[RMDB]
RNA sequence: GGGAACGACUCGAGUAGAGUCGAAAAUAAUUUUCUGCUGGGAAUGUCGCUUUUCGCCCCCUUGCCGGGUUGGAACAGCAUGAUUACCUUCCUUACCUCACUAAUUGCGCUCACUUACGGCAUCGGAUACUCGGUAUUAGUUCGCUAAUACCGAGUAAAAAGAAACAACAACAACAAC
Reactivity to DMS in 0.01 (KOAc 150mM, MgCl2 10mM, bicine 150mM(pH8.5), 24C), signal-to-noise 3, nucleotides 027 to 126: u010a080a070u010u020u010u000c040u020g020c050u010g000g000g020a070a050u000g000u000c060g000c040u000u000u000u000c040g000c060c020c010c040c080u000u000g000c030c170g000g040g000u000u010g020g010a060a070c100a040g010c030a050u000g010a090u000u010a120c050c030u000u000c010c000u000u000a070c060c020u010c040a070c060u010a040a100u010u000g020c050g010c010u000c030a070c040u000u010a060c070g010g000c050a090u000c060g010g020a300
Reactivity to 2A3 in 0.01 (KOAc 150mM, MgCl2 10mM, bicine 150mM(pH8.5), 24C), signal-to-noise 1, nucleotides 027 to 126: u010a010a060u050u030u050u040c040u070g040c040u060g020g010g050a080a080u030g070u100c070g000c090u000u060u020u070c020g020c000c000c000c000c000u030u040g020c060c010g000g060g000u030u080g080g020a070a050c020a010g000c020a030u100g020a040u100u090a050c010c000u010u050c000c000u040u060a060c000c010u050c020a040c040u070a110a110u080u070g050c030g000c030u050c010a050c010u030u090a010c050g020g040c060a060u040c030g050g000a030

Overview
The data come from the RNA Mapping Database (RMDB), library OK2TST. An RNA of 177 nucleotides, treated with DMS and 2A3 and read out base by base. The reactions ran in a buffer of 150 mM KOAc, 10 mM MgCl2 and 150 mM bicine (pH 8.5), at 24 C. The 2A3 profile rests on 1,910 reads.